Chemical mapping of a 177-nucleotide RNA with 2A3 and DMS. The reactions ran in a buffer of 150 mM KOAc, 10 mM MgCl2 and 150 mM bicine (pH 8.5), at 24 C.
RNA sequence: GGGAACGACUCGAGUAGAGUCGAAAAGAUAUGGAGACCGGUAGGGAGAUGUGGAUCGGAAACGAUCCAUACAUCGACGAUCUAUUCGGUCUCCUAAGUCAAACGAGUUGACUUCGGUCAACUCGAACCUUUAUAAUUUGUUCGCAAAUUAUAAAGGAAAAGAAACAACAACAACAAC
Reactivity to 2A3 in 0.01 (KOAc 150mM, MgCl2 10mM, bicine 150mM(pH8.5), 24C), signal-to-noise 2, nucleotides 027 to 126: g030a010u080a030u160g000g000a000g000a010c000c010g030g020u010a010g020g040g010a050g000a010u000g010u020g010g000a000u000c010g000g000a050a050a000c000g000a000u030c010c010a020u130a090c020a000u010c000g290a300c030g010a060u000c000u000a010u210u300c010g000g000u000c000u000c000c000u010a010a000g000u000c010a020a050a080c030g000a010g010u000u010g000a010c000u080u130c300g080g000u000c020a000a020c000u000c000g010a020a020
Reactivity to DMS in 0.01 (KOAc 150mM, MgCl2 10mM, bicine 150mM(pH8.5), 24C), signal-to-noise 3, nucleotides 027 to 126: g000a050u000a300u000g010g000a020g020a030c000c000g010g000u010a010g000g000g020a030g020a030u000g030u010g020g000a000u010c000g020g000a100a110a180c010g010a010u000c000c000a040u010a070c050a030u000c000g000a060c260g000a040u010c010u000a020u010u000c010g020g000u000c000u000c000c010u000a000a040g010u010c030a110a160a280c020g010a020g000u000u000g000a010c000u000u020c220g040g010u000c000a010a010c010u000c010g000a040a070